[RMDB]
RNA sequence: GGGAACGACUCGAGUAGAGUCGAAAAAACUUCAUGCUUAUGUGAGGGCAAAGUUGAUGCAUACCUACCCUUCCUAUAUCAGCCCUACUGGAUGCCUCCCUGCGCAUUUGCUUGGUGAUAUGUGGGGUCCCACUACCUACUUCGGUAGGUAGUGGGAAAAAGAAACAACAACAACAAC
Reactivity to 2A3 in 0.01 (KOAc 150mM, MgCl2 10mM, bicine 150mM(pH8.5), 24C), signal-to-noise 3, nucleotides 027 to 126: a020a000c060u050u020c040a120u100g020c060u110u110a090u280g090u070g120a130g010g020g020c040a120a130a000g020u060u090g100a080u090g030c040a040u090a250c000c000u050a050c000c000c000u020u080c010c050u090a050u000a020u130c040a070g110c000c000c000u030a040c060u060g000g040a020u070g040c000c010u000c000c020c030u060g000c070g000c040a030u070u050u180g020c010u000u040g050g000u010g020a060u050a070u210g030u030g000g000g000g000
Reactivity to DMS in 0.01 (KOAc 150mM, MgCl2 10mM, bicine 150mM(pH8.5), 24C), signal-to-noise 2, nucleotides 027 to 126: a020a090c040u000u010c060a130u000g000c050u030u040a000u020g000u000g010a080g000g010g040c050a040a030a070g000u000u010g000a080u010g010c130a140u010a130c030c010u000a140c000c020c060u000u000c050c070u030a120u040a050u020c170a070g000c000c030c050u020a030c060u010g010g010a130u000g010c120c020u010c030c070c020u000g000c070g030c080a020u010u000u000g020c150u000u040g030g010u010g030a050u040a080u000g060u010g010g010g000g000
Record summary:
Chemical mapping of a 177-nucleotide RNA with 2A3 and DMS. For 2A3, 1,096 sequencing reads were counted. 2A3 adducts were read by reverse transcription with SuperScript II with manganese. The RNA was probed in 150 mM KOAc, 10 mM MgCl2 and 150 mM bicine (pH 8.5) at 24 C. The data come from the RNA Mapping Database (RMDB), library OK1LIB.